This 207-nucleotide RNA was probed chemically with 2A3.
[RMDB]
RNA sequence: GGGAACGACUCGAGUAGAGUCGAAAAGAUUCGCCGUCGGCAUUUCCCCAGCAGCCAUGACCUUCCAGGCUGCGGUGCGGCUCGCCGCACAGGUCAUCCCUCAUCGGGCGCGUCCUGCGUCCUUCCAAAAACUGACUAACCUUCGGGUUAGUCAGAACAAUGAGAGUGACUUCGGUCACUCUCAUUGAAAAGAAACAACAACAACAAC
Reactivity to 2A3 in 0.01 (KOAc 150mM, MgCl2 10mM, bicine 150mM(pH8.5), 24C), signal-to-noise 1, nucleotides 027 to 156: g020a050u070u110c050g020c040c030g120u040c100g080g030c060a080u010u040u050c010c010c010c030a040g020c000a010g010c030c020a130u140g000a010c000c030u270u220c140c130a010g000g000c000u000g020c000g000g000u000g030c000g000g010c030u080c150g180c030c000g000c010a000c000a000g000g040u020c010a070u120c050c010c000u120c060a160u140c110g000g030g000c020g000c000g090u230c040c170u240g000c010g020u000c010c000u070u210c030c000a030a060a040a110a100c020u000g010a000c000u000a000a000c000c000u000u020c150g000g000g000u000u000a000g010u000c000a000g000a000a000